About this RNA:
This 177-nucleotide RNA was probed chemically with 2A3 and DMS. 2A3 adducts were read by reverse transcription with SuperScript II with manganese. Source: RMDB library OK2TRN, as collected in RNAgym. DMS (dimethyl sulfate) methylates the pairing face of unpaired adenines and cytosines.
RNA sequence: GGGAACGACUCGAGUAGAGUCGAAAACUGCCGCAAGCACGCCAUUUCCGAUGCCACGUUUUACACCUGGCGUAAGAAGUAUGGCGGUAUGGAGGUGCCUGAGGUUAAGCGCCUGAAGUCGCUUGAGCAGGGUGGAGUAGUUCGCUACUCCACCCUGAAAAGAAACAACAACAACAAC
Reactivity to 2A3 in 0.01 (KOAc 150mM, MgCl2 10mM, bicine 150mM(pH8.5), 24C), signal-to-noise 2, nucleotides 027 to 126: c000u040g010c010c000g090c080a050a000g010c010a010c070g000c020c020a030u030u020u020c010c010g010a040u070g000c000c000a020c030g000u030u010u090u220a170c190a020c040c030u020g010g000c000g000u020a010a020g010a010a000g050u110a050u050g000g000c130g020g000u060a090u110g180g040a020g010g040u030g000c030c030u070g090a100g030g070u100u190a040a000g010c010g010c010c020u040g050a090a010g090u120c070g000c020u000u010g010a000g040
Reactivity to DMS in 0.01 (KOAc 150mM, MgCl2 10mM, bicine 150mM(pH8.5), 24C), signal-to-noise 3, nucleotides 027 to 126: c060u000g010c020c050g000c010a050a060g020c020a160c000g010c020c010a000u000u000u000c000c050g020a230u020g020c010c000a000c210g010u000u010u000u000a100c240a060c050c070u030g010g000c020g000u000a100a080g010a020a050g020u010a060u000g010g010c000g010g010u010a030u000g020g000a120g000g010u000g010c010c020u010g010a110g010g010u010u010a070a120g000c010g010c040c050u000g020a100a120g010u000c090g010c020u000u000g010a210g000